Annotation
Source: RMDB library TTRINS, as collected in RNAgym. An RNA of 177 nucleotides, treated with DMS and read out base by base. Reactivities are given for positions 27 through 126. For DMS, 1,279 sequencing reads were counted. The reactions ran in a buffer of 150 mM KOAc, 10 mM MgCl2 and 150 mM bicine (pH 8.5), at 24 C.

[RMDB]
RNA sequence: GGGAACGACUCGAGUAGAGUCGAAAAGAUAUGGACUAGUCCACAACAUCCCAGAGGACAUGCAGGUCGGGUCGGAAACGACCCGACUGCAACAGCCUUAGGGAUGUUGUGGACUAGUCCUAAGUCAUCUAUCACUUGAGUUCGCUCAAGUGAUAGAAAAAGAAACAACAACAACAAC
Reactivity to DMS in 0.01 (KOAc 150mM, MgCl2 10mM, bicine 150mM(pH8.5), 24C), signal-to-noise 2, nucleotides 027 to 126: g010a040u000a300u020g000g000a010c000u010a010g000u000c000c000a020c010a040a020c010a030u000c000c000c040a300g010a010g020g020a130c160a170u000g000c000a000g000g010u000c000g000g030g070u020c000g000g000a060a070a230c020g000a000c010c000c040g000a010c000u000g000c000a030a020c200a150g000c000c000u000u000a160g020g000g000a010u000g000u020u010g010u000g000g000a000c000u000a000g000u000c000c000u000a000a100g010u000c030a090